This 177-nucleotide RNA was probed chemically with DMS and 2A3.
RNA sequence: GGGAACGACUCGAGUAGAGUCGAAAAUAAUCAGAGGAUGCUCUAUGUUUACAAACAAGUACAUGAUGAUGAACAUGAGGUACAUUGACAUUUUGAGCCGACAUCAAGAACUUCAUGUGGCUGAUGACCACCCAGUAGAGUUCGCUCUACUGGGUGGAAAAGAAACAACAACAACAAC
Reactivity to DMS in 0.01 (KOAc 150mM, MgCl2 10mM, bicine 150mM(pH8.5), 24C), signal-to-noise 2, nucleotides 027 to 126: u010a120a040u010c040a040g030a150g000g020a060u010g000c000u000c020u000a040u010g030u020u000u020a090c190a100a110a040c080a000a060g010u020a070c070a040u000g000a060u010g000a100u000g000a080a070c010a030u000g020a080g000g000u000a070c090a180u000u000g000a030c110a130u010u020u000u000g030a110g010c070c050g020a030c210a110u000c010a000a020g000a080a040c040u000u000c030a010u000g010u000g010g030c020u000g000a040u000g010a240
Reactivity to 2A3 in 0.01 (KOAc 150mM, MgCl2 10mM, bicine 150mM(pH8.5), 24C), signal-to-noise 2, nucleotides 027 to 126: u120a010a000u020c010a010g000a010g160g020a100u090g050c040u000c020u060a120u110g070u040u170u160a100c080a040a170a040c030a010a120g040u000a050c020a040u100g030a120u020g050a050u040g040a070a030c020a040u040g000a010g030g030u050a040c030a080u010u130g020a040c040a080u050u120u090u110g050a050g020c030c040g070a070c030a000u040c010a010a010g020a090a040c030u070u060c020a020u050g020u010g130g020c020u030g020a040u020g020a060